[RMDB]
RNA sequence: GGGAACGACUCGAGUAGAGUCGAAAACAGCUCAUUAAGCCCACUUAGAUAUGCUACGCUGUAUUUGGGACUAACCUCGGGUGUUGGUUUGGGUAUGGCAAACGCUGCAAAAACUAGAUUCAGUCAACAGGAGUAACAUGUUCGCAUGUUACUCCUGAAAAGAAACAACAACAACAAC
Reactivity to 2A3 in 0.01 (KOAc 150mM, MgCl2 10mM, bicine 150mM(pH8.5), 24C), signal-to-noise 4, nucleotides 027 to 126: c020a020g050c020u040c060a110u150u130a070a010g010c020c010c020a040c050u120u060a040g020a110u080a030u200g010c020u020a050c080g000c020u040g000u010a110u030u060u060g150g000g010a020c030u010a010a050c000c040u070c090g080g010g050u170g010u040u060g030g010u040u030u050g030g010g000u050a030u020g020g010c000a080a100a020c130g010c060u060g010c070a040a080a000a000a010c030u030a030g020a110u170u090c020a000g140u030c030a030a030
Reactivity to DMS in 0.01 (KOAc 150mM, MgCl2 10mM, bicine 150mM(pH8.5), 24C), signal-to-noise 3, nucleotides 027 to 126: c100a070g010c030u000c080a070u010u000a110a140g010c020c050c020a120c110u000u020a060g000a050u020a060u010g040c070u000a110c230g000c020u010g020u020a040u030u010u010g010g020g010a040c040u010a040a070c120c010u000c110g010g030g020u010g020u020u020g010g000u010u000u000g000g010g020u000a060u030g000g000c040a040a060a110c100g010c040u000g020c050a050a060a090a110a100c070u000a040g010a110u010u000c080a080g000u020c130a050a180